The record gives the reactivity of an RNA of 207 nucleotides to 2A3 and DMS. Conditions: 150 mM KOAc, 10 mM MgCl2 and 150 mM bicine (pH 8.5), 24 C. The 2A3 profile rests on 7,584 reads.

RNA sequence: GGGAACGACUCGAGUAGAGUCGAAAAGCGGGGCUUGAAACGCGGGUAGCGCGCACGCCCGGCGAAGAAGUUCGCAUACGCGGUGUGCUGGUGCCGAAUUGUCUGCUGCAACGGCACGCUCGACACCUAGAACAUACCGUAUUCGUACGGUAUGUAACGUAAUGAACUGGUUCGCCAGUUCAUUACGAAAAGAAACAACAACAACAAC
Reactivity to 2A3 in 0.01 (KOAc 150mM, MgCl2 10mM, bicine 150mM(pH8.5), 24C), signal-to-noise 6, nucleotides 027 to 156: g030c030g000g020g020g000c030u040u090g080a070a130a060c070g010c040g030g040g080u140a080g110c030g000c020g000c050a020c020g010c000c010c000g010g010c020g000a030a010g050a050a020g120u050u040c030g000c070a040u070a180c070g020c060g020g010u010g000u010g030c050u060g010g020u000g000c000c010g050a110a110u080u070g040u100c090u130g080c070u080g000c030a030a020c000g000g000c000a000c020g060c020u040c020g050a040c020a040c020c010u030a050g040a110a000c000a000u000a000c000c000g000u010a020u030u090c200g040u030a000c010g000g000u000a000u000g000u010a020a010
Reactivity to DMS in 0.01 (KOAc 150mM, MgCl2 10mM, bicine 150mM(pH8.5), 24C), signal-to-noise 3, nucleotides 027 to 156: g010c030g010g020g050g040c100u030u020g010a110a120a060c050g020c030g010g010g020u000a120g020c020g000c030g020c040a120c090g030c000c000c020g010g010c020g010a030a300g000a120a160g000u000u010c010g000c040a140u010a220c050g010c080g040g000u010g030u000g020c000u000g010g020u000g020c000c030g030a050a120u000u000g000u000c110u010g010c060u020g000c010a050a100c060g010g000c010a020c010g010c030u000c010g000a090c030a060c010c010u010a190g010a130a060c000a010u000a000c000c000g030u000a040u000u010c270g020u000a020c000g010g000u000a000u000g010u000a010a110